About this RNA
Structure probing data (2A3 and DMS) for a 177-nucleotide construct. Values cover nucleotides 27 to 126. Source: RMDB library OK1LIB, as collected in RNAgym. Conditions: 150 mM KOAc, 10 mM MgCl2 and 150 mM bicine (pH 8.5), 24 C. For 2A3 the reverse transcriptase was SuperScript II with manganese.
RNA sequence: GGGAACGACUCGAGUAGAGUCGAAAAGCACCAUCGUUUGCUCCCGAUGGCCAUCGAAUCGCUUUAUCUCUGUCAAGAAGUGGUAAUCCUGAAAUCUACGUCAUGGACUUGGUUAGCAAACAGUUAAAUACUAAUUAAAUUUCGAUUUAAUUAGUAUAAAAGAAACAACAACAACAAC
Reactivity to 2A3 in 0.01 (KOAc 150mM, MgCl2 10mM, bicine 150mM(pH8.5), 24C), signal-to-noise 9, nucleotides 027 to 126: g070c050a040c080c010a060u110c050g030u020u050u050g010c010u030c000c010c000g040a090u070g030g010c010c010a060u060c040g050a070a040u060c020g020c020u030u040u050a070u030c030u000c020u040g180u120c070a110a070g070a100a020g110u030g040g040u070a040a050u070c010c030u060g050a070a050a080u070c060u100a060c070g050u050c030a050u050g020g020a030c010u020u050g040g000u060u060a010g000c010a020a010a060c000a010g010u040u070a090a270
Reactivity to DMS in 0.01 (KOAc 150mM, MgCl2 10mM, bicine 150mM(pH8.5), 24C), signal-to-noise 7, nucleotides 027 to 126: g020c120a200c030c020a090u050c080g020u000u010u010g010c040u000c300c020c020g000a060u010g000g000c020c020a040u010c070g010a070a080u010c040g010c040u000u010u010a030u010c010u000c010u010g020u020c160a080a110g010a080a050g000u010g000g000u000a060a060u000c050c010u020g000a030a060a080u020c090u030a090c090g010u020c050a040u010g000g000a040c040u000u000g000g010u010u020a040g010c060a050a040a040c050a120g010u020u020a050a060